[RMDB]
An RNA of 177 nucleotides, treated with DMS and read out base by base. Values cover nucleotides 27 to 126. Source: RMDB library M2PK90, as collected in RNAgym.
RNA sequence: GGGAACGACUCGAGUAGAGUCGAAAAUAAUAUGCAUAUCGAGUUCCCAUGUAUUUUCGUAGGCCUGCGGCUGUAACAUUACAGCUUAGUAAGAAUGCUACCUAACGAUAGCUAGCCGCAGGAUUAAUGAGUUUCCUAGAUUCGUCUAGGAAACUCAAAAAGAAACAACAACAACAAC
Reactivity to DMS in 0.01 (KOAc 150mM, MgCl2 10mM, bicine 150mM(pH8.5), 24C), signal-to-noise 2, nucleotides 027 to 126: u010a140a090u000a040u010g030c080a120u020a070u020c090g010a170g010u010u000c020c000c010a110u020g010u010a030u000u000u000u020c110g000u030a140g010g010c000c000u020g010c030g000g030c010u000g040u010a050a120c200a110u000u000a000c030a130g010c220u000u010a100g010u000a030a020g000a150a060u000g000c000u020a000c040c000u010a040a170c280g000a030u000a020g000c000u000a030g050c000c010g000c000a010g000g000a050u000u000a020a150